[RMDB]
RNA sequence: GGGAACGACUCGAGUAGAGUCGAAAAGAAAGAAAGAAGCCGGAUAAUUGACCACUGAGAUCUCUAGAUUCGAUCUUGAGAGUGGUCUAUAGAUACGACGCACGAAAAGUGCGGAACGGCGAAGAAAGGGUUCUAAUAACUUCGGUUAUUAGAACCCAAAAGAAACAACAACAACAAC
Reactivity to 2A3 in 0.01 (KOAc 150mM, MgCl2 10mM, bicine 150mM(pH8.5), 24C), signal-to-noise 1, nucleotides 027 to 126: g090a000a020a000g080a000a140a000g130a170a000g000c000c010g040g080a080u100a180a020u180u140g000a000c000c020a040c030u090g000a000g080a180u030c030u000c020u060a020g000a140u240u000c060g150a170u010c060u000u000g040a030g000a000g020u010g010g000u000c000u000a000u040a000g030a000u020a080c120g050a000c000g090c020a000c010g050a230a000a000a000g000u000g030c000g000g020a020a020c000g000g000c010g000a030a000g010a020a010a060
Reactivity to DMS in 0.01 (KOAc 150mM, MgCl2 10mM, bicine 150mM(pH8.5), 24C), signal-to-noise 2, nucleotides 027 to 126: g020a220a150a060g000a200a160a070g020a210a300g000c000c000g040g030a110u050a130a110u000u000g000a010c010c000a040c000u000g000a100g000a070u020c000u020c160u010a120g000a090u020u070c220g000a020u000c000u000u020g030a030g020a070g080u040g000g000u010c000u000a010u000a070g030a190u030a040c280g000a120c000g020c010a000c030g030a040a070a060a100g000u000g030c000g000g000a080a030c000g010g010c000g040a060a120g040a120a060a090